Record summary:
Conditions: 150 mM KOAc, 10 mM MgCl2 and 150 mM bicine (pH 8.5), 24 C. An RNA of 177 nucleotides, treated with DMS and 2A3 and read out base by base. The 2A3 profile rests on 2,184 reads. The data come from the RNA Mapping Database (RMDB), library OK2TRN. For DMS the reverse transcriptase was MarathonRT.

[RMDB]
RNA sequence: GGGAACGACUCGAGUAGAGUCGAAAACCAAGGUACGCAUCCGCAGAUGUGCGGGGUCGUCCAUGGCCAGCAUCGACAUUACCCGGUACGCCUCAGAAGUGCGUGAGGACGGAUCCAGGGAUACCCCGUGGUUUUAGGGAUUCGUCCCUAAAACCACAAAAGAAACAACAACAACAAC
Reactivity to DMS in 0.01 (KOAc 150mM, MgCl2 10mM, bicine 150mM(pH8.5), 24C), signal-to-noise 2, nucleotides 027 to 126: c000c000a090a080g020g010u010a040c050g010c060a040u010c030c060g000c040a100g020a110u000g010u000g020c010g010g000g010g010u000c050g010u000c010c030a100u010g020g010c080c020a110g010c100a090u000c050g020a080c080a090u000u010a180c040c020c000g000g020u000a120c040g000c020c000u000c030a100g010a150a140g000u010g010c110g000u000g030a030g000g010a090c030g000g020a100u010c000c020a110g060g010g000a080u000a090c040c000c030c150
Reactivity to 2A3 in 0.01 (KOAc 150mM, MgCl2 10mM, bicine 150mM(pH8.5), 24C), signal-to-noise 3, nucleotides 027 to 126: c000c020a020a060g090g010u160a040c000g010c010a030u040c000c020g030c060a050g070a300u270g090u060g230c020g000g000g000g000u030c000g020u000c000c000a030u020g040g000c030c060a030g060c060a130u110c040g060a050c030a060u100u170a150c000c010c000g010g000u010a010c010g020c020c000u040c030a120g060a260a030g220u160g170c100g110u040g040a040g040g020a040c020g010g010a030u090c060c030a130g000g020g020a010u060a050c000c020c000c000